Chemical mapping of a 177-nucleotide RNA with DMS and 2A3.
Source: RMDB library OK2TRN, as collected in RNAgym.
For DMS, 3,104 sequencing reads were counted.

RNA sequence: GGGAACGACUCGAGUAGAGUCGAAAAUCUGUUGCUAUCAGGCCAUUACUCAGCUCUUUUGUGACAGGGACGGCUUGUUGUGGGCACUUCUCACCCCUGAAAAUCUGGGACCUCAACAGUGGGCAGCGCUGAACACAUAUUUCGAUAUGUGUUCAGCAAAAGAAACAACAACAACAAC
Reactivity to DMS in 0.01 (KOAc 150mM, MgCl2 10mM, bicine 150mM(pH8.5), 24C), signal-to-noise 3, nucleotides 027 to 126: u010c050u010g020u000u000g010c040u000a090u010c090a080g010g000c040c030a070u010u000a070c080u000c080a100g010c040u000c080u010u010u010u000g040u010g020a080c050a070g010g000g000a100c120g010g000c060u010u000g000u000u000g010u010g010g010g000c060a070c110u000u000c030u010c040a220c060c020c000c030u010g010a070a060a040a110u000c060u000g010g000g000a120c040c030u000c040a050a050c090a030g000u000g000g000g020c060a110g020c170
Reactivity to 2A3 in 0.01 (KOAc 150mM, MgCl2 10mM, bicine 150mM(pH8.5), 24C), signal-to-noise 1, nucleotides 027 to 126: u000c020u030g050u080u070g050c020u040a040u230c010a010g000g040c000c040a070u060u180a090c040u070c090a040g000c040u010c040u070u110u130u190g120u040g060a080c050a040g000g000g050a040c010g050g000c010u040u060g020u030u060g050u080g000g020g000c010a010c050u050u040c020u010c010a080c010c020c000c000u040g140a100a080a030a090u090c040u000g000g000g080a050c010c030u020c020a020a030c020a050g030u040g000g020g050c000a030g030c030